The record gives the reactivity of an RNA of 207 nucleotides to 2A3 and DMS. For 2A3 the reverse transcriptase was SuperScript II with manganese. DMS adducts were read by reverse transcription with MarathonRT. In probing experiments dimethyl sulfate is read out at A N1 and C N3, which are open when not base-paired. It was measured as part of the RMDB library RNAMAK. The RNA was probed in 150 mM KOAc, 10 mM MgCl2 and 150 mM bicine (pH 8.5) at 24 C.
RNA sequence: GGGAACGACUCGAGUAGAGUCGAAAAGCGACUUCGGUCGCCGUCACACCUUUGUGUGGCAUCAGUUGUCAGAAAUGACCGACCCAUUGGGUCGGUACCAUUUCUUGGAUUUACUGAUGAACUACCACACUCUGGUUACUACUAGGUUCGCCUAGAACUGUAGAUCUUCUUUCGAGAAGAUCUACAGAAAAGAAACAACAACAACAAC
Reactivity to 2A3 in 0.01 (KOAc 150mM, MgCl2 10mM, bicine 150mM(pH8.5), 24C), signal-to-noise 6, nucleotides 027 to 156: g000c010g000a000c000u060u130c300g130g010u000c000g000c010c010g180u170c030a150c020a010c030c000u010u010u000g000u010g000u000g020g000c000a010u000c000a000g010u030u020g020u000c000a000g030a010a000a010u040g050a150c000c000g000a000c000c010c150a300u100u300g000g000g000u000c000g000g010u020a100c070c010a010u010u020u000c000u050u160g100g020a060u220u210u210a020c000u000g000a000u000g000a010a030c060u130a070c100c000a000c000a000c000u000c010u010g000g020u020u060a060c050u040a060c000u010a020g050g030u070u060c200g070c050c000u030a050g030a160a050
Reactivity to DMS in 0.01 (KOAc 150mM, MgCl2 10mM, bicine 150mM(pH8.5), 24C), signal-to-noise 1, nucleotides 027 to 156: g010c010g010a030c020u000u000c270g100g050u000c010g000c000c010g020u000c060a110c130a060c000c010u000u000u000g000u000g010u000g020g000c030a030u000c010a030g010u000u000g010u000c020a080g000a000a010a030u020g010a270c070c000g000a030c000c000c010a300u010u010g080g030g030u000c000g000g000u000a000c090c000a010u000u000u010c010u000u000g010g010a050u000u010u000a030c000u000g030a030u000g010a120a070c040u000a160c000c000a030c000a020c010u010c060u000g010g000u000u030a090c100u000a190c030u000a060g000g010u000u000c180g010c010c010u010a030g000a060a240